[RMDB]
RNA sequence: GGGAACGACUCGAGUAGAGUCGAAAAGCGGUUGCCUAGAGGCAUGGUCGUUUACCGCGACUUUCCAGUGAAUGGAUCAACCUGUUGAUGCAGGUAGUGUGUAUCAUGCGAAUCGUUCUGCGAUUCGCCUUGUGGCGCUGUUCGCAGCGCCACAAGGAAAAGAAACAACAACAACAAC
Reactivity to DMS in 0.01 (KOAc 150mM, MgCl2 10mM, bicine 150mM(pH8.5), 24C), signal-to-noise 4, nucleotides 027 to 126: g010c000g010g000u000u000g000c020c010u020a130g010a180g010g010c010a050u000g010g010u000c020g030u000u010u010a040c040c020g010c000g000a180c120u010u000u000c000c010a140g000u030g010a090a070u010g000g000a060u010c070a100a070c000c010u010g010u010u030g010a200u010g000c010a020g010g030u000a040g010u020g020u020g020u000a050u000c040a060u010g020c010g010a010a000u000c000g020u000u020c240u040g000c010g010a020u000u000c010g010
Reactivity to 2A3 in 0.01 (KOAc 150mM, MgCl2 10mM, bicine 150mM(pH8.5), 24C), signal-to-noise 4, nucleotides 027 to 126: g000c000g010g000u040u040g010c040c070u180a140g040a220g060g100c050a010u110g030g000u050c040g020u050u080u110a010c000c000g000c000g000a010c000u040u030u000c010c020a020g020u040g260a090a090u080g060g070a040u040c040a010a040c000c000u020g000u030u210g110a130u290g030c000a010g080g020u060a080g060u020g040u010g050u080a070u150c090a050u120g010c000g000a000a000u000c000g000u070u170c110u250g030c000g000a000u010u000c000g000

Structure probing data (DMS and 2A3) for a 177-nucleotide construct. Source: RMDB libraries RFM100 and RFMREP, as collected in RNAgym. 2A3 adducts were read by reverse transcription with SuperScript II with manganese. Reactivities are given for positions 27 through 126.